[RMDB]
RNA sequence: GGGAACGACUCGAGUAGAGUCGAAAAGAAAGAAAAGGUGCCAUAAGCUUGGAUCUUUCCCAGCUAGUGUAGAUCGAGGCAAACACAAUUGUGCUACACUUGCAGAGCACAUAAUGGCACCAAAGAAACCAGCGUAUCGAUUCGUCGAUACGCUGGUAAAAGAAACAACAACAACAAC
Reactivity to DMS in 0.01 (KOAc 150mM, MgCl2 10mM, bicine 150mM(pH8.5), 24C), signal-to-noise 1, nucleotides 027 to 126: g000a090a050a020g010a020a060a120a210g000g000u000g040c010c000a000u000a110a130g000c000u000u000g000g000a010u010c000u000u000u000c000c000c000a160g000c070u020a080g070u070g000u000a000g000a010u000c000g010a050g010g000c050a100a130a070c080a100c210a180a100u020u000g000u000g000c020u000a020c040a180c140u020u030g050c170a150g040a060g070c000a070c090a050u000a070a040u000g020g000c000a000c000c020a010a090a050g000a120a100
Reactivity to 2A3 in 0.01 (KOAc 150mM, MgCl2 10mM, bicine 150mM(pH8.5), 24C), signal-to-noise 2, nucleotides 027 to 126: g010a000a100a030g170a090a100a000a030g000g000u000g000c000c000a040u050a190a110g030c070u060u060g050g150a170u130c020u030u010u000c000c040c000a000g000c000u030a060g010u020g010u020a070g010a180u220c130g270a100g120g010c040a060a090a030c070a000c030a040a070u040u050g020u080g050c000u000a060c060a050c070u020u060g000c050a030g020a050g050c090a040c010a010u180a140a000u000g020g000c000a000c010c000a010a010a010g090a020a120
Structure probing data (DMS and 2A3) for a 177-nucleotide construct. Values cover nucleotides 27 to 126. For 2A3 the reverse transcriptase was SuperScript II with manganese. The reactions ran in a buffer of 150 mM KOAc, 10 mM MgCl2 and 150 mM bicine (pH 8.5), at 24 C. The DMS profile rests on 1,066 reads.